[RMDB]
RNA sequence: GGGAACGACUCGAGUAGAGUCGAAAAAACAUCCAAACUGACUUUCAUGAAUUUUCUUAGGGAGAUAGAGUGAAAUAAAAUUAUGACCCACUUUGCAGAGCACAGAAUUCCAACUAUAUUUUCAUUUUAGCUGGCUGUUUCACGAUAGCAAUUAAAAGGUACUAAUUAGUUUCGACUAAUUAGUACCAAAAGAAACAACAACAACAAC
Reactivity to 2A3 in 0.01 (KOAc 150mM, MgCl2 10mM, bicine 150mM(pH8.5), 24C), signal-to-noise 2, nucleotides 027 to 156: a010a000c040a020u110c030c010a100a010a040c070u060g080a010c020u070u070u030c080a070u100g080a100a050u060u080u110u090c040u130u120a110g000g080g000a030g010a030u050a040g080a010g040u000g040a010a010a020u130a060a060a050a020u170u110a100u110g030a040c000c010c000a010c020u070u000u010g000c010a020g020a050g070c040a010c000a060g050a070a070u090u040c020c000a030a010c090u020a030u010a080u140u120u120u120c070a070u070u110u000u050a010g040c010u020g040g000c020u040g020u020u030u050c070a070c030g080a010u080a010g040c020a030a030u050u110a100a030a040a040
Reactivity to DMS in 0.01 (KOAc 150mM, MgCl2 10mM, bicine 150mM(pH8.5), 24C), signal-to-noise 1, nucleotides 027 to 156: a050a070c020a050u010c080c010a050a080a130c020u000g020a120c100u020u010u000c050a050u020g020a300a100u000u010u000u000c040u000u000a120g070g030g000a070g000a050u000a020g000a240g020u020g000a030a060a050u000a000a040a070a100u000u000a100u000g010a100c080c000c010a120c050u000u000u000g030c000a050g000a130g110c020a100c050a050g010a070a080u000u000c060c020a060a090c030u000a060u010a030u010u010u010u000c050a030u000u020u010u000a020g050c030u000g090g020c030u020g020u020u000u000c030a050c030g020a160u000a090g030c070a050a110u020u000a070a060a080a180

Structure probing data (2A3 and DMS) for a 207-nucleotide construct.
Reactivities are given for positions 27 through 156.
For DMS the reverse transcriptase was MarathonRT.
The DMS profile rests on 1,576 reads.
The reactions ran in a buffer of 150 mM KOAc, 10 mM MgCl2 and 150 mM bicine (pH 8.5), at 24 C.